[RMDB]
RNA sequence: GGGAACGACUCGAGUAGAGUCGAAAAGAUAUGGAUCCCGGAGGGAGCUGCUCGGAAACGAGACAGCGACGAUCUCCAGGGAUCCUAAGUCAAAACGAGCCAAGAGAGUUCGCUCUCUUGGCUCGAACCAAUGGAACCAGUUCGCUGGUUCCAUUGGAAAAGAAACAACAACAACAAC
Reactivity to DMS in 0.01 (KOAc 150mM, MgCl2 10mM, bicine 150mM(pH8.5), 24C), signal-to-noise 2, nucleotides 027 to 126: g000a050u010a300u010g000g000a000u000c000c000c000g010g010a030g000g000g030a020g000c000u000g010c000u000c010g010g000a160a050a240c000g000a000g010a170c010a010g010c000g000a060c190g000a020u000c000u000c000c000a110g080g000g000a000u000c000c000u020a020a080g000u000c040a100a010a070a250c010g010a020g010c010c000a000a010g020a030g030a010g020u000u000c280g000c000u000c000u000c000u010u000g000g010c000u010c000g000a000a060